An RNA of 207 nucleotides, treated with 2A3 and DMS and read out base by base. 2A3 adducts were read by reverse transcription with SuperScript II with manganese. Conditions: 150 mM KOAc, 10 mM MgCl2 and 150 mM bicine (pH 8.5), 24 C. Values cover nucleotides 27 to 156.

RNA sequence: GGGAACGACUCGAGUAGAGUCGAAAAAGAGGCGAUACGUCGCCUCAAGCUUGGUGCUUAGCUUCUUUCACCAAGCAUAUUACACGCGGAUAACAGCCAAAGGAGAAACACUGACUACGGUCAGUGAGGAAGUUGGUUCGGUUCGCCGAACCAACAACCUUCGACAUAAGUUCGCUUAUGUCGAAGGAAAAGAAACAACAACAACAAC
Reactivity to 2A3 in 0.01 (KOAc 150mM, MgCl2 10mM, bicine 150mM(pH8.5), 24C), signal-to-noise 3, nucleotides 027 to 156: a000g000a000g000g010c010g000a010u010a040c210g070u010c000g000c000c000u000c000a000a000g010c010u000u000g000g000u010g000c040u060u080a070g050c020u070u050c000u010u020u010c000a000c000c000a010a000g000c010a000u070a030u060u130a060c110a040c050g090c050g050g020a040u080a280a080c030a050g050c050c050a010a050a000g020g000a020g030a030a080a000c020a000c000u000g010a000c010u040a030c130g070g010u000c010a000g000u010g000a010g010g020a130a060g000u000u000g000g010u000u000c010g000g010u020u040c110g010c090c000g000a000a000c000c000a000a000c000a000a000
Reactivity to DMS in 0.01 (KOAc 150mM, MgCl2 10mM, bicine 150mM(pH8.5), 24C), signal-to-noise 1, nucleotides 027 to 156: a010g000a030g030g040c000g000a040u010a040c210g030u000c000g010c010c020u000c000a010a020g000c010u000u000g020g020u000g010c090u010u000a100g000c070u000u000c010u000u000u000c010a040c000c010a000a040g000c000a100u000a080u000u000a150c110a100c110g030c010g030g000a190u010a100a210c010a110g000c060c060a100a020a040g010g010a070g010a200a060a230c030a010c010u000g010a000c020u000a070c250g110g030u000c030a030g010u000g000a010g010g020a100a120g010u000u010g000g010u000u000c010g040g000u000u000c300g000c000c000g040a000a030c030c000a010a010c000a040a060
The DMS profile rests on 1,946 reads. In probing experiments dimethyl sulfate is read out at A N1 and C N3, which are open when not base-paired.